[RMDB]
RNA sequence: GGGAACGACUCGAGUAGAGUCGAAAAAUGCACUACUGCAACUCUGGUGAAGGGACUGUAAGGAUCAUUACAAUCUCAGCAGCUCUUGUAUCUGCAAAUUACAAAGACAGCACCACACUCUACUAAAGGGAUAUAAUACGUUCGCGUAUUAUAUCCCAAAAGAAACAACAACAACAAC
Reactivity to 2A3 in 0.01 (KOAc 150mM, MgCl2 10mM, bicine 150mM(pH8.5), 24C), signal-to-noise 5, nucleotides 027 to 126: a000u100g000c020a010c050u140a030c040u070g000c020a050a040c040u000c030u090g050g040u080g100a100a060g020g000g090a160c010u010g020u050a050a030g060g030a070u100c010a030u070u120a050c040a060a050u010c030u030c040a070g000c020a000g020c010u020c010u070u070g080u070a080u030c010u020g030c020a040a050a180u170u070a080c070a030a080a020g050a030c000a030g000c000a010c000c000a010c000a010c010u040c000u000a110c020u010a170a000a010
Reactivity to DMS in 0.01 (KOAc 150mM, MgCl2 10mM, bicine 150mM(pH8.5), 24C), signal-to-noise 3, nucleotides 027 to 126: a090u020g030c060a070c100u010a140c040u000g000c100a040a110c140u000c040u010g030g020u010g000a190a120g010g000g010a030c020u000g020u000a090a100g000g010a120u020c110a090u010u040a060c150a060a030u000c020u000c050a160g030c070a080g040c030u010c040u020u010g000u020a020u000c040u020g000c130a050a060a030u030u000a040c110a040a040a040g020a050c070a130g020c000a020c030c000a070c100a000c010u000c000u010a060c050u020a040a090a150

Source information
An RNA of 177 nucleotides, treated with 2A3 and DMS and read out base by base. For DMS the reverse transcriptase was MarathonRT. It was measured as part of the RMDB library OK1LIB.